[RMDB]
RNA sequence: GGGAACGACUCGAGUAGAGUCGAAAAAAUGCGGGGCAUUGUAUAAAACAUACAAAAUAGGAGACCAAUACAUAUCUAUAUCUAAAGCUAUUCGUUUAGAUAAAGAGAGAUGCCAGAGGUUAGUCACGUAUAAGUGACACUUCGGUGUCACUUAUACAAAAGAAACAACAACAACAAC
Reactivity to DMS in 0.01 (KOAc 150mM, MgCl2 10mM, bicine 150mM(pH8.5), 24C), signal-to-noise 2, nucleotides 027 to 126: a050a050u000g000c070g010g010g000g020c090a090u000u000g010u000a040u000a050a070a090a120c170a100u010a040c040a010a050a070a130u010a080g020g010a130g000a110c040c050a040a110u000a110c040a040u000a090u000c000u000a100u000a010u000c020u010a020a020a020g020c120u000a100u010u020c150g010u010u000u000a010g010a020u000a010a040a040g000a040g000a100g000a050u000g000c040c100a080g020a130g000g010u010u000a100g010u000c080a040c230
Reactivity to 2A3 in 0.01 (KOAc 150mM, MgCl2 10mM, bicine 150mM(pH8.5), 24C), signal-to-noise 1, nucleotides 027 to 126: a000a010u090g000c090g000g040g070g000c030a050u000u000g020u000a050u010a050a130a010a060c020a000u130a020c020a010a150a040a140u080a130g000g120a070g030a070c020c000a060a050u110a050c020a000u190a020u020c020u040a070u010a000u050c000u010a000a080a060g110c030u160a200u180u210c060g000u000u000u010a010g020a010u030a030a070a000g060a000g000a000g010a000u050g020c010c010a060g030a030g100g000u010u110a090g070u160c030a000c140